[RMDB]
Chemical mapping of a 207-nucleotide RNA with 2A3.

RNA sequence: GGGAACGACUCGAGUAGAGUCGAAAAGGGGUCUGUUCGUGGAAGCGACAUGCGUGGUACUGAAGCCUCCACGGUAUCAGCACGCAACAGCGCUUCGUAACAUCGAACAGACGGAGGCACCCAAAUCUAUCUCUGUCGUUCGCGACAGAGAUAGAAACAUGGGUUACCGGUUCGCCGGUAACCCAUGAAAAGAAACAACAACAACAAC
Reactivity to 2A3 in 0.01 (KOAc 150mM, MgCl2 10mM, bicine 150mM(pH8.5), 24C), signal-to-noise 2, nucleotides 027 to 156: g080g000g040g010u000c000u000g000u010u000c000g000u000g010g010a000a000g000c010g300a300c230a230u080g020c020g010u000g000g000u000a030c010u010g020a150a020g000c000c000u000c010c030a020c030g000g000u010a000u020c020a010g180c040a060c130g060c020a000a300c070a260g150c040g010c000u000u000c000g010u010a040a000c030a270u140c000g000a000a000c000a010g000a020c000g000g000a000g000g000c030a040c020c000c000a060a050a020u030c000u000a020u000c000u050c000u000g010u000c000g020u000u090c230g000c030g110a000c000a000g020a010g000a000u000a000g000a000a000a000